[RMDB]
RNA sequence: GGGAACGACUCGAGUAGAGUCGAAAAGGAAAUAGGUAUGCCGUCGCUAUUAAAAUAUUGCGACAAACUGGCACACAGCAAGCGAGUGGUGACGAGUGCACACAAGUCGUUCCCAGCCAGAAAAAAACUUCGUAAGUAACUUCGGUUACUUACGAAGAAAAGAAACAACAACAACAAC
Reactivity to 2A3 in 0.01 (KOAc 150mM, MgCl2 10mM, bicine 150mM(pH8.5), 24C), signal-to-noise 1, nucleotides 027 to 126: g110g000a080a110a030u090a150g060g080u100a060u110g010c000c000g000u010c000g000c050u030a010u090u210a120a020a020a160u280a030u070u140g000c000g000a020c000a030a050a030c020u040g000g020c010a020c000a000c010a040g040c020a060a030g050c040g090a030g040u060g040g010u030g040a030c040g030a010g010u140g040c040a040c000a000c040a070a020g000u010c000g000u010u010c020c000c000a010g000c000c030a010g120a040a060a010a010a000a020a020
Reactivity to DMS in 0.01 (KOAc 150mM, MgCl2 10mM, bicine 150mM(pH8.5), 24C), signal-to-noise 1, nucleotides 027 to 126: g000g000a030a070a050u000a010g000g060u000a120u000g040c030c060g000u000c000g020c010u000a040u030u010a100a160a050a200u000a110u000u010g000c000g010a050c080a050a020a050c150u000g000g010c030a050c080a010c060a130g010c030a000a060g000c030g020a150g020u000g000g000u010g000a050c050g000a070g020u000g000c000a010c040a090c080a090a030g010u000c000g000u000u000c000c000c000a050g000c100c190a050g030a000a000a070a090a190a050a040
Overview
An RNA of 177 nucleotides, treated with 2A3 and DMS and read out base by base. Source: RMDB library M2PK90, as collected in RNAgym. Reactivities are rounded to 0.1 and cut off at 0 and 3. The reactions ran in a buffer of 150 mM KOAc, 10 mM MgCl2 and 150 mM bicine (pH 8.5), at 24 C. 2A3 adducts were read by reverse transcription with SuperScript II with manganese.